Conditions: 150 mM KOAc, 10 mM MgCl2 and 150 mM bicine (pH 8.5), 24 C. An RNA of 177 nucleotides, treated with DMS and read out base by base. The DMS profile rests on 1,049 reads.

[RMDB]
RNA sequence: GGGAACGACUCGAGUAGAGUCGAAAACUGUUGGGGACGGUGGAGCGUUACUUUGCGGAGAUGAUGGGCAUCCCCCGCCUGCAGCAGCGAAUUCACUGCUUCAUGUUCAGCCGCACCUUCCCAUCCACUAUCAAACCCUCUUCGGAGGGUUUGAUAGAAAAGAAACAACAACAACAAC
Reactivity to DMS in 0.01 (KOAc 150mM, MgCl2 10mM, bicine 150mM(pH8.5), 24C), signal-to-noise 1, nucleotides 027 to 126: c110u000g000u010u000g000g020g020g000a060c070g020g040u010g000g030a080g040c100g050u010u010a070c210u010u000u010g040c020g030g020a120g010a100u010g040a120u010g000g040g000c050a110u000c010c000c010c010c030g040c020c130u000g010c140a050g020c030a080g020c040g000a090a200u010u000c070a040c040u000g000c000u010u000c010a040u000g010u000u010c060a070g010c000c020g020c040a050c070c060u010u000c000c000c000a120u020c160c170a180